[RMDB]
RNA sequence: GGGAACGACUCGAGUAGAGUCGAAAAGCGCAUGGCUCCGAUGGAUGAGCUGUUUAAAGAUGCGCUGAAGGAUACAGAAGCGAACGUAACCCUGACAUUGUGGUUACCGGGUGACCCUCAGCCGUCGGAGUUUACAUGCUUUCGAGCAUGUAAACUCAAAAGAAACAACAACAACAAC
Reactivity to 2A3 in 0.01 (KOAc 150mM, MgCl2 10mM, bicine 150mM(pH8.5), 24C), signal-to-noise 3, nucleotides 027 to 126: g050c050g010c040a110u090g000g000c010u000c010c020g150a120u120g060g050a110u040g020a020g010c030u020g090u040u120u080a100a060a000g050a020u040g000c060g000c080u000g020a030a010g020g020a060u110a300c040a020g090a140a030g120c020g070a040a050c010g020u010a010a020c000c000c020u040g050a050c040a210u080u190g060u140g030g000u040u000a020c020c000g030g000g060u060g020a060c000c000c000u010c010a030g030c020c000g010u050c010g020
Reactivity to DMS in 0.01 (KOAc 150mM, MgCl2 10mM, bicine 150mM(pH8.5), 24C), signal-to-noise 4, nucleotides 027 to 126: g020c050g000c110a050u010g000g000c010u010c010c030g020a100u000g000g000a100u000g000a040g000c020u000g010u010u000u020a100a090a120g000a050u000g000c060g020c000u000g020a100a060g020g000a160u010a080c120a070g010a210a110g000c040g010a100a100c160g010u000a020a010c010c000c010u010g020a130c220a130u000u010g000u010g040g000u000u000a010c020c060g020g000g030u000g020a120c050c120c020u010c010a080g010c010c020g030u000c050g010

This 177-nucleotide RNA was probed chemically with 2A3 and DMS. The 2A3 profile rests on 1,998 reads. Source: RMDB library OK2TRN, as collected in RNAgym. For 2A3 the reverse transcriptase was SuperScript II with manganese. Reactivities are given for positions 27 through 126.